[RMDB]
RNA sequence: GGGAACGACUCGAGUAGAGUCGAAAAUAAUGCAAGCAGCACCAACCACUGAAACACCUUCUGUUGCAACAGUAUCACCAACAGUUGAAGCACAAUCAGAACCAUCUUCAAGUAGUGUUACUAUCCAAAUGUUUGGGUUUUUCGAAACCCAAACAUUAAAAGAAACAACAACAACAAC
Reactivity to 2A3 in 0.01 (KOAc 150mM, MgCl2 10mM, bicine 150mM(pH8.5), 24C), signal-to-noise 1, nucleotides 027 to 126: u130a030a040u110g020c010a030a030g030c040a000g060c050a010c010c000a020a040c020c050a040c070u040g020a080a060a030c050a030c020c000u050u030c090u100g070u040u070g010c030a080a030c010a060g040u050a050u070c010a000c070c010a030a030c000a060g060u090u010g020a050a010g020c000a040c010a110a080u140c020a040g010a080a010c000c010a040u040c000u100u020c040a060a010g000u030a020g000u020g080u130u020a020c010u050a100u040c030c040a040
Reactivity to DMS in 0.01 (KOAc 150mM, MgCl2 10mM, bicine 150mM(pH8.5), 24C), signal-to-noise 2, nucleotides 027 to 126: u010a060a040u000g000c050a070a060g020c070a060g010c000a090c060c030a090a090c020c050a100c070u000g000a130a080a050c150a080c060c020u000u010c040u000g000u010u000g000c080a010a070c110a040g010u000a020u010c030a040c080c050a020a050c040a060g010u000u000g000a060a060g040c070a050c110a050a080u000c050a070g000a080a040c070c030a040u000c030u000u010c070a030a070g020u000a050g020u000g000u000u000a050c060u000a060u000c040c030a020
This 177-nucleotide RNA was probed chemically with 2A3 and DMS. For 2A3, 1,099 sequencing reads were counted. For DMS the reverse transcriptase was MarathonRT. The DMS profile rests on 1,506 reads. High 2A3 reactivity points to a flexible backbone, as in loops and unpaired stretches.